[RMDB]
RNA sequence: GGGAACGACUCGAGUAGAGUCGAAAAGAUAUGGAGUUCAAUAAUUGAUGAACUACUGCAAGUGGUCGGAAACGACCACUGCAGCAUCAUAGAACUCCUAAGUCAAACGGAUUCUUCGGAAUCCGAAUCUUACCCUCUUCUUCGGAAGAGGGUAAGAAAAAGAAACAACAACAACAAC
Reactivity to DMS in 0.01 (KOAc 150mM, MgCl2 10mM, bicine 150mM(pH8.5), 24C), signal-to-noise 1, nucleotides 027 to 126: g020a070u020a300u010g000g010a010g050u010u010c000a280a160u010a090a080u000u000g020a030u000g000a090a020c100u020a300c000u000g000c000a090a080g010u000g000g020u000c010g030g000a110a060a300c010g010a020c000c000a000c000u000g000c010a000g000c030a030u000c000a020u000a130g000a000a000c000u000c000c000u000a020a080g030u030c060a080a120a300c040g000g000a000u000u000c010u000u020c200g050g000a010a000u000c000c000g030a060a060
Reactivity to 2A3 in 0.01 (KOAc 150mM, MgCl2 10mM, bicine 150mM(pH8.5), 24C), signal-to-noise 2, nucleotides 027 to 126: g030a010u060a060u220g000g040a000g000u000u020c060a110a160u200a250a090u150u030g020a020u010g010a110a110c150u280a050c000u300g000c060a170a130g010u000g020g000u020c020g000g010a110a070a070c020g010a000c020c000a000c010u000g030c010a010g010c000a000u000c000a000u010a070g020a010a000c000u000c020c000u000a060a030g050u000c050a150a010a060c000g020g010a000u000u000c020u000u140c300g140g000a000a000u000c010c000g030a000a020